[RMDB]
RNA sequence: GGGAACGACUCGAGUAGAGUCGAAAAGCGAUCGUCUGGAAGCAUCGAUGCUCAUCGGUGUCGGAGCUGCGUUCGAUUUCCAUGCAGGCCUCAAGCGGCAGGCUCCAAGGUUCAUUCAAAGAAGCGGCUUCGAAUGGGUGUUUCGUCUGCUGUGCGAAGCGCAUUCAAUAUUCGUAUUGAAUGCGCUAAAAGAAACAACAACAACAAC
Reactivity to 2A3 in 0.01 (KOAc 150mM, MgCl2 10mM, bicine 150mM(pH8.5), 24C), signal-to-noise 5, nucleotides 027 to 156: g060c020g000a060u030c020g060u030c070u140g050g040a090a020g020c010a020u040c020g020a020u070g070c090u090c180a040u050c030g030g020u030g050u070c030g030g010a010g000c020u020g000c020g090u010u040c010g020a060u050u040u020c020c010a040u110g040c040a030g050g060c010c020u030c060a080a040g050c050g040g000c020a010g020g010c020u000c070c030a030a050g030g010u040u080c020a020u090u030c030a060a060a080g050a060a030g080c050g050g000c000u020u020c060g020a040a040u050g010g030g020u070g040u040u080u020c070g050u010c030u010g000c020u050g060u090g060c050g060a050
Reactivity to DMS in 0.01 (KOAc 150mM, MgCl2 10mM, bicine 150mM(pH8.5), 24C), signal-to-noise 2, nucleotides 027 to 156: g000c030g000a020u000c030g010u000c040u000g030g010a260a070g020c010a040u000c020g010a060u020g020c130u010c080a120u000c060g040g040u010g030u000c030g000g020a080g020c010u010g020c000g010u000u000c040g020a090u000u010u000c020c040a180u000g030c050a100g000g000c030c010u000c020a080a230g030c070g000g020c030a060g020g010c010u000c040c040a060a100g010g010u010u000c070a120u020u000c050a080a060a120g010a100a160g010c100g020g000c010u000u000c090g020a000a050u010g010g010g020u000g010u000u010u000c060g030u000c020u000g020c030u010g000u010g000c060g000a070